[RMDB]
RNA sequence: GGGAACGACUCGAGUAGAGUCGAAAAGGAUCACGAGGGGGAGACCCCGGCCACCUGGGACGGACACCCAAGGUGCUCACACCGGAGACGGUGGAUCCGGCCCGAGAGGGCAACGAAGGUCCGAGCAACGAGGGUAUUAGUUCGCUAAUACCCUCGUAAAAGAAACAACAACAACAAC
Reactivity to DMS in 0.01 (KOAc 150mM, MgCl2 10mM, bicine 150mM(pH8.5), 24C), signal-to-noise 2, nucleotides 027 to 126: g020g010a020u000c020a130c090g010a200g010g000g000g000g000a210g010a200c020c000c000c010g000g000c100c010a040c010c000u000g010g030g000a070c020g010g000a070c050a100c000c000c030a080a100g030g020u000g000c150u000c140a270c030a010c020c000g010g010a210g030a190c170g000g000u020g030g010a050u000c000c000g020g000c010c000c000g010a090g000a150g000g000g010c020a080a080c100g020a150a060g000g000u000c020c010g020a170g020c260a140
The record gives the reactivity of an RNA of 177 nucleotides to DMS. Values cover nucleotides 27 to 126. DMS adducts were read by reverse transcription with MarathonRT. The data come from the RNA Mapping Database (RMDB), library OK2TRN. For DMS, 1,255 sequencing reads were counted.